[RMDB]
RNA sequence: GGGAACGACUCGAGUAGAGUCGAAAAAUGCGGAACCGUCGUUUAUACUUACUAACUAAUGGGAUGUACUGAAUGAUCUACGAACUGAUCGCCUCUUUCCUGAUGCUGGGCGUCGCUUAUAUCUUCAUGGAGUGCAGGGCGGGCGCAGCGGCCUACCAUUUGAAAGGGAGUUCGCUCCCUUUCAAAUAAAAGAAACAACAACAACAAC
Reactivity to 2A3 in 0.01 (KOAc 150mM, MgCl2 10mM, bicine 150mM(pH8.5), 24C), signal-to-noise 3, nucleotides 027 to 156: a000u060g020c020g010g030a060a020c010c020g080u090c010g020u060u130u080a130u020a040c030u150u120a040c050u080a240a030c040u080a180a100u090g010g010g020a030u050g080u060a070c080u050g100a090a090u080g010a030u020c010u060a030c060g050a070a050c070u100g030a050u120c020g020c010c010u060c000u040u090u060c010c020u070g030a070u130g030c020u060g000g040g020c020g060u070c000g000c010u070u080a110u060a080u230c030u060u070c060a040u170g080g070a020g010u040g070c040a050g000g020g000c010g000g000g020c060g000c020a000g040c000g010g030c000c000u060a040c070c000
Reactivity to DMS in 0.01 (KOAc 150mM, MgCl2 10mM, bicine 150mM(pH8.5), 24C), signal-to-noise 2, nucleotides 027 to 156: a120u000g010c030g000g000a050a070c060c060g020u010c060g030u010u010u000a140u000a110c050u000u010a140c060u010a060a160c060u000a100a120u010g030g000g000a070u000g010u000a100c060u010g010a100a070u010g000a050u000c020u000a210c040g000a060a090c020u000g010a090u000c050g040c020c030u000c070u000u000u000c030c050u020g010a090u000g020c050u000g020g030g010c050g010u000c050g000c020u000u000a070u000a090u010c040u000u000c060a100u010g000g020a060g010u000g000c060a100g010g020g040c040g000g000g060c010g020c030a090g010c120g010g000c000c010u000a050c060c020
Chemical mapping of a 207-nucleotide RNA with 2A3 and DMS. The RNA was probed in 150 mM KOAc, 10 mM MgCl2 and 150 mM bicine (pH 8.5) at 24 C.